[RMDB]
RNA sequence: GGGAACGACUCGAGUAGAGUCGAAAACGCCAGCUCAAACGAAGCUAGUAUCGAGUGCGAGUUCCUACUAGCUUCGUUUGCAAGACGCAACUCAUAGUUGCGUCAGCUGGCACUUAUGAAUGUGUACGAUCAUGGUUUAUUUCGAUAGGUCAUGAUCAAAAGAAACAACAACAACAAC
Reactivity to DMS in 0.01 (KOAc 150mM, MgCl2 10mM, bicine 150mM(pH8.5), 24C), signal-to-noise 8, nucleotides 027 to 126: c220g000c010c000a000g010c020u010c010a000a000a020c000g010a010a010g010c000u000a000g000u000a020u020c200g000a040g010u000g000c300g010a160g000u000u000c000c060u000a010c000u000a000g010c000u000u000c000g010u000u000u000g010c230a120a080g000a010c000g020c010a000a010c000u000c300a150u040a100g010u000u000g000c010g010u000c000a000g010c000u000g010g010c000a020c060u020u030a070u020g000a100a070u030g000u010g000u010a100c170
Reactivity to 2A3 in 0.01 (KOAc 150mM, MgCl2 10mM, bicine 150mM(pH8.5), 24C), signal-to-noise 9, nucleotides 027 to 126: c060g000c000c000a000g010c000u010c030a000a000a000c000g000a000a000g000c000u000a000g010u000a030u140c100g020a050g040u110g110c070g050a050g050u050u020c000c000u000a000c000u000a000g000c000u000u000c000g000u000u000u000g000c000a010a080g000a000c000g000c000a000a010c000u080c140a190u150a240g000u000u000g000c000g000u000c000a000g000c000u000g000g050c000a010c010u150u160a130u210g200a240a050u170g060u050g030u110a050c110